[RMDB]
RNA sequence: GGGAACGACUCGAGUAGAGUCGAAAAGAAUAUUUAGCGCUGAAUCCGUCAUGGAGCGGGGGACCCACUUGUUGCAACGCUCGUUGCUAGGGGUGAAUCCGAAAGGACGGGCAUCUCUCCAAGCCCGCGUAGCAUGACACUUCGGUGUCAUGCUACGAAAAGAAACAACAACAACAAC
Reactivity to DMS in 0.01 (KOAc 150mM, MgCl2 10mM, bicine 150mM(pH8.5), 24C), signal-to-noise 3, nucleotides 027 to 126: g010a100a070u040a040u020u020u010a110g000c070g000c080u000g020a090a070u020c040c020g020u010c090a070u030g010g030a110g010c070g000g000g010g010g000a090c000c000c010a120c080u040u020g010u010u050g000c000a010a040c010g010c220u020c170g000u000u010g030c030u000a050g000g000g000g000u000g010a130a080u020c000c010g000a050a130a060g020g010a060c040g010g010g000c050a040u040c060u010c020u000c020c050a150a110g010c010c000c040g010
Reactivity to 2A3 in 0.01 (KOAc 150mM, MgCl2 10mM, bicine 150mM(pH8.5), 24C), signal-to-noise 5, nucleotides 027 to 126: g030a030a040u110a050u160u160u120a090g010c090g010c070u080g030a090a050u020c020c000g010u010c030a160u140g050g020a050g050c020g000g000g000g010g040a030c010c010c010a230c110u100u230g090u110u140g050c000a000a000c030g090c170u160c250g020u010u020g010c020u020a000g010g000g010g030u040g040a070a010u030c000c000g050a070a050a010g090g010a010c020g000g000g000c010a080u000c030u000c000u020c040c010a010a050g010c000c010c000g020